[RMDB]
RNA sequence: GGGAACGACUCGAGUAGAGUCGAAAAAAAAAGAUAUGGAAACGCUACCCACCUAGAUGAUCAACAGCUAAUCUCGGAAACGAGAUUAGACAUGAUCCUCUCUAGAGGCGUUUCCUAAGUCAAAAAAGUAUAACUAUACCUUCGGGUAUAGUUAUACAAAAGAAACAACAACAACAAC
Reactivity to DMS in 0.01 (KOAc 150mM, MgCl2 10mM, bicine 150mM(pH8.5), 24C), signal-to-noise 2, nucleotides 027 to 126: a030a040a110a050a070g010a090u010a160u000g010g000a020a000a000c000g030c000u000a080c000c000c010a300c070c020u010a020g020a010u000g000a090u010c000a040a030c280a160g020c030u000a010a000u000c000u030c000g010g000a060a060a050c000g010a020g000a000u000u000a000g000a000c050a130u000g010a000u000c000c000u000c020u000c020u000a010g020a140g000g000c000g010u000u000u000c000c000u000a000a070g010u030c130a020a100a110a060a100a120
Reactivity to 2A3 in 0.01 (KOAc 150mM, MgCl2 10mM, bicine 150mM(pH8.5), 24C), signal-to-noise 1, nucleotides 027 to 126: a020a010a000a010a010g190a090u300a090u160g000g010a000a020a000c010g000c000u060a170c020c000c000a040c010c000u000a010g020a030u190g000a010u070c030a050a110c010a170g020c010u000a000a000u000c010u000c020g060g040a040a020a010c020g010a020g000a000u000u000a000g010a000c000a020u080g020a010u000c000c000u050c000u000c000u010a000g000a020g020g010c000g000u000u000u010c000c000u000a000a010g100u110c060a060a090a090a140a060a060